[RMDB]
Source: RMDB library 15KREP, as collected in RNAgym.
This 177-nucleotide RNA was probed chemically with DMS.
For DMS the reverse transcriptase was MarathonRT.
Reactivities are given for positions 27 through 126.
RNA sequence: GGGAACGACUCGAGUAGAGUCGAAAAUGUAGGAGAUCCAGCACAGUUGCCAGCUCCUAGGACUUUGUUGACUAGAGGCACAUUGGAACCAGAAAAUUUCAAUAGUGUCACUAGAUUGAUGUGUAACCAAUUAAAGGAGCUUCGGCUCCUUUAAUUGAAAAGAAACAACAACAACAAC
Reactivity to DMS in 0.01 (KOAc 150mM, MgCl2 10mM, bicine 150mM(pH8.5), 24C), signal-to-noise 2, nucleotides 027 to 126: u020g010u000a020g000g030a060g000a150u000c080c030a180g000c020a080c200a170g010u000u000g020c010c030a080g040c020u000c020c010u000a010g010g010a100c090u000u000u000g020u000u010g000a200c000u000a000g020a060g020g010c000a000c000a020u000u000g000g000a000a010c060c100a300g010a070a060a100a250u000u000u010c000a010a020u000a120g030u010g030u000c000a070c010u000a010g000a190u000u000g000a040u000g000u000g010u010a150a050c200